[RMDB]
Structure probing data (2A3 and DMS) for a 177-nucleotide construct. DMS (dimethyl sulfate) methylates the pairing face of unpaired adenines and cytosines. For 2A3 the reverse transcriptase was SuperScript II with manganese. The 2A3 profile rests on 3,851 reads. The data come from the RNA Mapping Database (RMDB), library RFMREP. The RNA was probed in 150 mM KOAc, 10 mM MgCl2 and 150 mM bicine (pH 8.5) at 24 C.
RNA sequence: GGGAACGACUCGAGUAGAGUCGAAAACGGCUAAGCUUUAAGACAACCAGUCUAACGGAUUGACCGCUUUUCCUCUUUGUCUUAUUUCAAAGUAUAGACCGUUUUGCUUAAUUCCACCGGUAUGGCCCAACACCAAAUUGUUCGCAAUUUGGUGUUGAAAAGAAACAACAACAACAAC
Reactivity to 2A3 in 0.01 (KOAc 150mM, MgCl2 10mM, bicine 150mM(pH8.5), 24C), signal-to-noise 4, nucleotides 027 to 126: c020g000g010c020u020a110a020g030c020u070u040u070a010a000g010a020c010a010a040c060c050a040g040u020c040u030a040a020c030g060g030a090u120u150g180a200c010c010g060c050u030u020u030u040c010c030u030c020u040u020u010g010u010c000u030u060a110u070u200u120c080a030a000a040g040u000a040u040a100g100a150c010c010g010u010u030u020u000g030c020u100u110a070a080u080u040c010c020a040c010c050g040g020u190a120u170g090g020c000c010
Reactivity to DMS in 0.01 (KOAc 150mM, MgCl2 10mM, bicine 150mM(pH8.5), 24C), signal-to-noise 7, nucleotides 027 to 126: c010g010g020c000u010a040a300g010c000u000u000u000a040a030g000a010c010a030a030c130c070a060g010u010c030u000a040a050c070g000g010a300u010u010g000a110c010c010g010c090u000u000u010u000c100c040u000c060u000u000u010g010u000c020u000u000a080u010u010u010c260a070a040a030g020u010a210u000a030g010a080c010c010g010u000u000u000u000g000c140u010u000a050a140u000u000c010c020a060c120c050g000g010u000a080u010g000g010c120c080